[RMDB]
RNA sequence: GGGAACGACUCGAGUAGAGUCGAAAAGUCAGCAUACAGGGGGAACAGUCAUGGAAGUCGUGGUUACCCUAGAACAUGCUUUAGUGACCCUAGCGCAUGGUCUAGUAGCCCUAGACUGGAGAGUCGUAGUUACUCUAGAAGACUUUUUGUUGACUGUACUCGAAUUACAGUUCGCUGUAAUUCGAGUAAAAGAAACAACAACAACAAC
Reactivity to DMS in 0.01 (KOAc 150mM, MgCl2 10mM, bicine 150mM(pH8.5), 24C), signal-to-noise 2, nucleotides 027 to 156: g000u000c020a080g020c040a110u000a020c030a210g000g030g000g080g020a180a060c060a060g020u000c020a070u010g050g000a050a020g020u000c040g060u000g020g000u010u000a010c020c020c030u000a000g030a000a030c000a010u000g020c000u000u000u000a050g000u020g010a240c300c090c010u000a010g020c290g030c000a070u000g030g000u010c000u010a010g010u000a050g000c020c010c070u010a110g010a080c030u000g010g010a130g020a060g020u010c040g010u000a100g010u010u010a070c030u010c030u000a110g000a130a120g000a110c030u000u000u000u000u000g010u000u000g000a080c040u010g000u000
Reactivity to 2A3 in 0.01 (KOAc 150mM, MgCl2 10mM, bicine 150mM(pH8.5), 24C), signal-to-noise 1, nucleotides 027 to 156: g000u010c000a030g020c070a060u170a120c070a100g000g000g040g000g010a040a070c000a010g040u040c010a070u060g080g050a050a010g040u080c060g020u060g050g000u070u020a010c040c000c030u010a020g000a000a000c010a000u000g000c000u060u030u030a110g000u180g160a030c040c000c000u000a000g020c000g000c010a000u000g020g000u000c000u000a000g030u020a020g000c010c000c030u030a080g010a010c010u010g030g000a040g010a000g020u020c030g030u090a040g020u140u100a020c030u000c010u000a040g010a170a020g010a020c040u040u010u000u070u080g110u010u020g030a060c000u000g020u000
Structure probing data (DMS and 2A3) for a 207-nucleotide construct. For DMS the reverse transcriptase was MarathonRT. As a SHAPE reagent, 2A3 marks flexible, mostly unpaired nucleotides at the ribose 2'-OH. It was measured as part of the RMDB library ARCHII. For DMS, 2,886 sequencing reads were counted.